[RMDB]
RNA sequence: GGGAACGACUCGAGUAGAGUCGAAAACGCGUUAACCUUCGGGUUAACGCGAAAGGGCGGCUAGCUCAGCGGAAGAGCGCUCGCCUCACACGCGAGAGGUCGUAGGUUCAAGUCCUACGCCGCCCACCAAAAACAAAGCCGUGUUCGCACGGCUUUGCACUUGAUGACUCUUCGGAGUCAUCAAGUGAAAAGAAACAACAACAACAAC
Reactivity to DMS in 0.01 (KOAc 150mM, MgCl2 10mM, bicine 150mM(pH8.5), 24C), signal-to-noise 1, nucleotides 027 to 156: c020g040c000g030u000u030a020a030c000c000u000u000c300g020g230g010u000u020a040a000c010g040c070g000a010a000a080g060g020g020c000g000g010c020u010a090g000c000u020c040a120g030c140g000g010a110a080g000a010g060c000g010c030u000c010g000c020c000u000c270a140c110a180c220g010c000g000a020g000a020g000g000u000c000g000u000a020g010g020u000u020c050a040a300g000u000c000c040u020a000c010g010c010c000g090c000c020c000a020c000c010a000a100a060a130a190c010a020a000a010g020c000c000g060u000g020u000u000c100g080c020a020c000g030g020c010u000u000u000g020